This 177-nucleotide RNA was probed chemically with DMS and 2A3. For 2A3, 2,804 sequencing reads were counted. For DMS the reverse transcriptase was MarathonRT. 2A3 adducts were read by reverse transcription with SuperScript II with manganese.
RNA sequence: GGGAACGACUCGAGUAGAGUCGAAAAAAGGGUUCUCAGCAGGUCUCAAGAGGCUUUUGAAGAGUUUUUUCUGCAUGUUUGCACAGGGAAUAGCCAGUGAGGGAAUCCGAACUGUUCUUAUUGCCCACUAAUAAUCACCUUUCGAGGUGAUUAUUAGAAAAGAAACAACAACAACAAC
Reactivity to DMS in 0.01 (KOAc 150mM, MgCl2 10mM, bicine 150mM(pH8.5), 24C), signal-to-noise 6, nucleotides 027 to 126: a050a080g000g010g010u000u000c020u000c020a210g020c080a050g000g010u000c040u000c090a080a120g020a110g000g010c050u010u000u010u010g010a100a120g000a050g010u000u000u000u010u000u000c040u010g010c050a070u010g010u000u010u000g020c070a080c150a100g000g000g000a060a030u010a070g020c300c010a040g010u000g000a270g010g010g010a080a040u010c020c010g010a110a050c070u000g010u000u010c030u010u000a050u000u000g000c010c010c020a290
Reactivity to 2A3 in 0.01 (KOAc 150mM, MgCl2 10mM, bicine 150mM(pH8.5), 24C), signal-to-noise 3, nucleotides 027 to 126: a000a030g040g020g010u040u010c020u000c020a010g010c020a000g000g040u000c000u010c090a070a080g070a030g170g010c040u030u100u170u300g140a140a050g020a000g080u020u030u030u050u090u090c050u030g000c030a050u070g140u190u230u150g060c060a060c060a100g080g000g060a040a030u040a060g300c000c020a000g020u000g060a070g020g030g030a160a100u070c000c020g000a010a000c020u040g050u090u040c020u030u060a100u030u100g110c010c000c000a020